[RMDB]
RNA sequence: GGGAACGACUCGAGUAGAGUCGAAAAGAUAUGGAGCCACGUGGAACUACGUAGGAUCGGAAACGAUCCUACGCCAUGGCUCCUAAGUCAAAAGUUGACGAGGAAGGUUCGCCUUCCUCGUCAACAACCGUUAGGGAGGGUUCGCCCUCCCUAACGGAAAAGAAACAACAACAACAAC
Reactivity to DMS in 0.01 (KOAc 150mM, MgCl2 10mM, bicine 150mM(pH8.5), 24C), signal-to-noise 1, nucleotides 027 to 126: g000a030u010a300u020g010g020a000g010c000c010a080c190g020u000g000g030a050a080c050u050a270c010g000u000a010g000g000a010u010c000g000g010a070a090a180c010g020a000u000c000c000u000a000c000g000c010c000a010u010g020g010c000u000c000c010u000a000a060g000u000c010a050a080a080a050g010u000u010g010a010c000g010a010g030g000a000a020g000g010u000u010c270g000c010c000u010u010c000c000u000c000g060u000c000a000a000c020a010a100